Structure probing data (DMS and 2A3) for a 177-nucleotide construct. The reactions ran in a buffer of 150 mM KOAc, 10 mM MgCl2 and 150 mM bicine (pH 8.5), at 24 C. The 2A3 profile rests on 1,821 reads. DMS adducts were read by reverse transcription with MarathonRT. Values cover nucleotides 27 to 126.
RNA sequence: GGGAACGACUCGAGUAGAGUCGAAAAAGAAGACGCAGAUGGAGAGAAGGCAGGCUCCAUCAAUGUGGGGCCAUGGAGAGUGUGUAGGGCUCCCCAGAGCCUAGUACAGUGUCUGACACAGAAUCAAGGAUAUAUCAUCCUUCGGGAUGAUAUAUCCAAAAGAAACAACAACAACAAC
Reactivity to DMS in 0.01 (KOAc 150mM, MgCl2 10mM, bicine 150mM(pH8.5), 24C), signal-to-noise 3, nucleotides 027 to 126: a090g020a170a070g010a050c050g020c050a080g000a070u010g000g000a060g010a120g010a120a060g000g000c050a140g000g000c000u010c000c000a020u000c080a070a040u000g010u000g010g010g000g020c000c040a090u000g020g010a050g000a050g000u000g010u010g020u010a130g000g010g000c010u000c000c030c010c030a110g020a300g020c010c000u000a050g010u000a070c060a050g000u010g010u000c020u010g010a140c150a060c110a070g020a070a050u010c150a070a160
Reactivity to 2A3 in 0.01 (KOAc 150mM, MgCl2 10mM, bicine 150mM(pH8.5), 24C), signal-to-noise 2, nucleotides 027 to 126: a010g070a040a010g030a020c050g000c060a000g040a080u060g070g050a030g020a020g060a210a080g110g020c080a030g010g030c010u000c030c020a010u040c020a000a070u170g000u040g040g030g020g000c000c000a020u050g030g030a030g010a000g020u070g040u050g070u130a110g100g170g000c000u000c000c000c000c000a030g010a010g070c010c000u010a020g040u040a020c020a010g020u000g020u100c030u000g040a040c030a000c010a150g250a100a070u170c060a140a080